[RMDB]
RNA sequence: GGGAACGACUCGAGUAGAGUCGAAAAGAUAUGGACACGAUCAGACUUUUGACGAGGACCGUCGGAAACGACGGCGAACCUCGAUAAGUCUAUCGUGUCCUAAGUCAAAAUCAGCCUUCGGGCUGAACACAUUCGUUCCGUUCGCGGAACGAAUGUGAAAAGAAACAACAACAACAAC
Reactivity to DMS in 0.01 (KOAc 150mM, MgCl2 10mM, bicine 150mM(pH8.5), 24C), signal-to-noise 1, nucleotides 027 to 126: g000a040u010a300u030g000g000a000c000a000c000g020a000u000c220a000g000a020c000u000u000u000u030g000a220c210g000a000g000g010a150c000c000g000u010c010g010g000a150a100a160c000g000a010c020g010g030c100g010a080a120c000c000u000c000g010a120u000a000a010g050u000c000u000a060u000c030g010u010g020u010c000c030u000a030a070g000u010c000a070a060a140a180u000c000a000g010c000c000u020u000c300g090g030g010c000u000g010a020a130
Reactivity to 2A3 in 0.01 (KOAc 150mM, MgCl2 10mM, bicine 150mM(pH8.5), 24C), signal-to-noise 1, nucleotides 027 to 126: g050a010u080a020u210g000g000a010c000a010c000g010a030u020c160a090g000a020c030u110u140u200u300g210a150c110g010a020g030g020a150c010c010g050u010c020g010g000a070a190a030c000g000a010c020g030g000c060g060a020a010c000c010u000c000g010a020u030a050a000g000u050c000u000a000u000c030g010u000g000u000c000c000u000a000a000g010u000c000a000a000a000a290u030c000a000g000c000c000u030u100c300g110g010g000c010u040g000a000a000

This 177-nucleotide RNA was probed chemically with DMS and 2A3. Values cover nucleotides 27 to 126. For 2A3, 2,160 sequencing reads were counted. The reactions ran in a buffer of 150 mM KOAc, 10 mM MgCl2 and 150 mM bicine (pH 8.5), at 24 C. Source: RMDB library TTRDES, as collected in RNAgym.